[RMDB]
An RNA of 177 nucleotides, treated with DMS and 2A3 and read out base by base. The DMS profile rests on 19,325 reads. The 2A3 profile rests on 29,196 reads.
RNA sequence: GGGAACGACUCGAGUAGAGUCGAAAAGUGGAUAGUUUCGACUAUCCACACAACUGAUGAUCUUACAGUGGAGGAUGAAGAAGAUGGCCAUCGGUUCCUCAAAUAGCACAGAGUUCGCUCUGUGCAAUUCUAUCUUCAAUUUCGAUUGAAGAUAGAAAAAAGAAACAACAACAACAAC
Reactivity to DMS in 0.01 (KOAc 150mM, MgCl2 10mM, bicine 150mM(pH8.5), 24C), signal-to-noise 9, nucleotides 027 to 126: g020u000g000g000a010u000a010g010u000u000u010c180g010a040c000u000a000u000c000c000a000c010a030c150a070a060c030u000g010a050u000g000a050u000c030u000u000a100c080a080g020u000g020g010a070g010g010a090u010g010a100a090g010a080a070g010a050u000g010g010c120c020a020u000c030g010g010u000u000c010c010u000c220a050a060a080u000a120g010c000a000c010a010g000a010g020u000u010c220g010c000u000c000u000g010u000g000c000a030a020
Reactivity to 2A3 in 0.01 (KOAc 150mM, MgCl2 10mM, bicine 150mM(pH8.5), 24C), signal-to-noise 9, nucleotides 027 to 126: g000u010g000g000a010u000a000g010u010u040u110c180g020a010c000u000a000u000c010c000a000c000a000c000a000a010c010u050g010a030u020g010a020u040c020u050u160a090c060a090g040u100g100g110a070g080g020a080u120g050a050a110g040a030a010g030a070u080g040g030c020c010a010u020c020g030g010u020u010c000c000u090c020a070a100a130u180a040g000c000a000c000a000g010a000g010u050u070c140g040c090u000c000u000g000u000g000c000a000a000

The RNA was probed in 150 mM KOAc, 10 mM MgCl2 and 150 mM bicine (pH 8.5) at 24 C.